Record summary:
The record gives the reactivity of an RNA of 207 nucleotides to 2A3.
RNA sequence: GGGAACGACUCGAGUAGAGUCGAAAAGCGUACUACCUAUCGUCGCUAAGCUUGGAUUUAUGGGUCUCUAGCGUGACCAGAUGGUUUUUCUUCCCAAAUAGGAAGAAAAACCAUCUGGUUCGGGCCCAUUGUCAGCUUAAAAGUCGAUAGGUAUCGCGCACACGUGAGUGUUCGCACUCACGUGUGCAAAAGAAACAACAACAACAAC
Reactivity to 2A3 in 0.01 (KOAc 150mM, MgCl2 10mM, bicine 150mM(pH8.5), 24C), signal-to-noise 1, nucleotides 027 to 156: g040c030g030u060a060c040u000a010c020c000u050a000u000c000g000u000c040g070c200u060a000a000g000c010u160u240g200g010a180u300u300u060a000u090g010g030g020u000c070u030c100u160a070g120c070g240u220g000a000c000c000a000g000a010u000g070g000u000u000u000u000u000c030u000u000c000c000c060a090a260a110u260a090g000g000a000a000g000a000a000a000a000a000c000c000a000u000c000u010g000g000u000u000c000g000g000g000c050c000c000a000u000u000g000u000c000a000g000c000u010u010a040a220a020a190g020u000c000g000a000u000a000g000g000u000a000u060c000g020c020

The RNA was probed in 150 mM KOAc, 10 mM MgCl2 and 150 mM bicine (pH 8.5) at 24 C.